[RMDB]
RNA sequence: GGGAACGACUCGAGUAGAGUCGAAAAGAUAUGGAGUGCGGGAUGCUCAGCCGAAGAACUCGGAAACGAGGGAGGCUGAGAACUACAUCGCGCACUCCUAAGUCAAAGGCUCGGUUCGCCGAGCCAACAUCCCUGUACACUUCGGUGUACAGGGAUGAAAAGAAACAACAACAACAAC
Reactivity to 2A3 in 0.01 (KOAc 150mM, MgCl2 10mM, bicine 150mM(pH8.5), 24C), signal-to-noise 1, nucleotides 027 to 126: g020a010u060a030u110g000g000a000g000u000g010c010g000g270g000a010u000g020c010u010c020a000g030c030c000g130a260a060g010a080a030c000u000c010g020g000a080a080a000c010g000a010g000g040g000a020g000g020c020u030g000a010g000a010a000c020u170a010c020a000u020c020g030c000g040c300a000c010u010c000c000u000a000a000g010u000c000a000a040a200g010g000c000u000c000g030g050u040u060c200g050c100c000g000a000g000c030c000a010a000
Reactivity to DMS in 0.01 (KOAc 150mM, MgCl2 10mM, bicine 150mM(pH8.5), 24C), signal-to-noise 1, nucleotides 027 to 126: g010a020u030a300u000g000g000a050g030u030g000c010g010g000g030a030u000g000c000u000c000a020g000c040c000g080a090a080g000a210a200c000u010c000g000g060a100a060a110c010g010a020g010g020g010a060g020g000c050u010g030a020g000a030a050c060u020a300c000a010u010c000g020c000g000c000a030c010u030c000c000u000a010a090g010u010c010a040a090a100g000g000c000u030c000g010g000u000u010c270g000c000c030g000a000g020c000c010a010a030
The record gives the reactivity of an RNA of 177 nucleotides to 2A3 and DMS. The RNA was probed in 150 mM KOAc, 10 mM MgCl2 and 150 mM bicine (pH 8.5) at 24 C. Values cover nucleotides 27 to 126. High 2A3 reactivity points to a flexible backbone, as in loops and unpaired stretches.